[RMDB]
Chemical mapping of a 177-nucleotide RNA with 2A3 and DMS. Conditions: 150 mM KOAc, 10 mM MgCl2 and 150 mM bicine (pH 8.5), 24 C. 2A3 adducts were read by reverse transcription with SuperScript II with manganese. For 2A3, 968 sequencing reads were counted.
RNA sequence: GGGAACGACUCGAGUAGAGUCGAAAAUAAAACAUAAAAAUGUAAGGCCGGGCAUGGUGGCCCACGCCUGUAAUCACAGCACUUUGGGAGGCUGAAGCGGGUGCAUCAUCUGAGGUCAAGAGUUUGACACUAGGCAUGGUUUCGACCAUGCCUAGUGAAAAGAAACAACAACAACAAC
Reactivity to 2A3 in 0.01 (KOAc 150mM, MgCl2 10mM, bicine 150mM(pH8.5), 24C), signal-to-noise 2, nucleotides 027 to 126: u040a000a030a010a000c120a030u130a080a120a000a070a060u170g050u120a160a040g020g000c000c010g040g010g000c030a010u060g020g020u080g040g070c000c010c000a020c070g030c000c070u040g000u030a020a030u170c060a030c000a060g010c020a010c150u160u190u070g110g090g000a100g000g040c030u050g030a070a000g000c030g010g000g110u070g120c010a040u000c010a000u080c020u060g040a030g080g000u010c010a020a000g040a080g020u030u060u060g030a040
Reactivity to DMS in 0.01 (KOAc 150mM, MgCl2 10mM, bicine 150mM(pH8.5), 24C), signal-to-noise 1, nucleotides 027 to 126: u090a060a070a060a060c020a100u070a070a090a080a060a080u010g010u010a100a100g000g110c010c150g050g000g000c140a020u110g000g020u020g000g010c000c030c020a170c120g000c010c000u000g010u030a070a060u010c120a050c060a010g000c000a130c070u030u040u100g000g000g030a020g000g010c020u000g000a060a000g000c040g000g000g000u000g000c040a010u000c070a030u010c000u030g000a120g000g000u000c030a020a090g000a140g000u000u000u010g030a170